[RMDB]
RNA sequence: GGGAACGACUCGAGUAGAGUCGAAAAGGACUGCGCAGUCCGGCAACAUCAGCAGAGAUCCCGCUAUACGUGACGGAUUGGCUGAAGCGUACAGAAAUAUUGAGCCUCCUGCAAGAGGCAGCCAAGCAAAACGUACGUGAGUUCGCUCACGUACGAACGGGCAUACGUAGUUCGCUACGUAUGCCCGAAAAGAAACAACAACAACAAC
Reactivity to 2A3 in 0.01 (KOAc 150mM, MgCl2 10mM, bicine 150mM(pH8.5), 24C), signal-to-noise 1, nucleotides 027 to 156: g000g000a020c070u080g010c130g040c200a020g090u050c000c010g070g050c000a010a010c020a110u020c000a050g000c040a030g190a070g000a160u040c030c130c000g000c000u070a160u120a160c190g070u070g160a020c020g010g020a010u000u070g030g000c000u040g000a000a070g080c030g100u110a050c060a060g230a110a240a000u300a170u130u130g010a030g000c000c000u000c000c040u200g070c070a140a030g000a000g030g020c020a000g020c020c010a040a040g020c040a020a190a000a000c000g000u000a000c000g000u030g000a000g000u000u120c200g000c240u000c010a000c010g000u000a000c010g000a010a000